[RMDB]
RNA sequence: GGGAACGACUCGAGUAGAGUCGAAAAUAGCACCACAAACACUGGACAUCCGUCCGGCUGCUCUCUGGGCGGUCAGGGGCCAUCAGGCCGCGGACGGGUCCAGCAAGCUAGCUCAGGAGCCUGUCCACUAUCACUGCGGCUUCGGCCGCAGUGAUAGAAAAGAAACAACAACAACAAC
Reactivity to 2A3 in 0.01 (KOAc 150mM, MgCl2 10mM, bicine 150mM(pH8.5), 24C), signal-to-noise 1, nucleotides 027 to 126: u020a000g020c010a000c000c020a040c130a050a190a000c010a020c100u020g000g000a000c030a180u060c000c000g000u000c010c000g000g000c000u040g000c000u060c000u000c030u130g040g040g020c000g000g030u070c020a030g200g000g000g000c000c010a110u220c020a060g010g000c020c000g060c040g070g000a030c000g000g080g000u000c000c000a020g000c000a000a000g030c010u060a000g010c000u000c090a000g050g030a090g000c020c040u060g100u000c000c130a030